[RMDB]
Background
The data come from the RNA Mapping Database (RMDB), library OK2TST. Chemical mapping of a 177-nucleotide RNA with DMS. DMS adducts were read by reverse transcription with MarathonRT.
RNA sequence: GGGAACGACUCGAGUAGAGUCGAAAAGAUGGAUGGGAGAUUGCAUCUCUCCUAGAUGAGCUUGAUAUUAGUCUGGAGGAUGUGGUUGACAUACCUCUGUGCCUCUUGGAUCUUGAUGAGACCCUAGAAUAUGCCGUCACUUCGGUGACGGCAUAUUAAAAGAAACAACAACAACAAC
Reactivity to DMS in 0.01 (KOAc 150mM, MgCl2 10mM, bicine 150mM(pH8.5), 24C), signal-to-noise 1, nucleotides 027 to 126: g010a030u010g040g000a030u000g010g010g000a300g010a020u000u000g000c020a090u000c010u020c010u000c000c010u000a020g000a020u000g000a140g010c230u010u000g010a160u020a130u010u000a190g010u000c040u000g000g010a000g000g000a000u000g030u000g000g000u000u000g010a300c020a010u000a090c010c000u000c020u000g000u010g010c000c000u000c040u000u000g010g020a010u000c010u000u010g010a130u000g010a080g020a060c020c000c000u000a040g000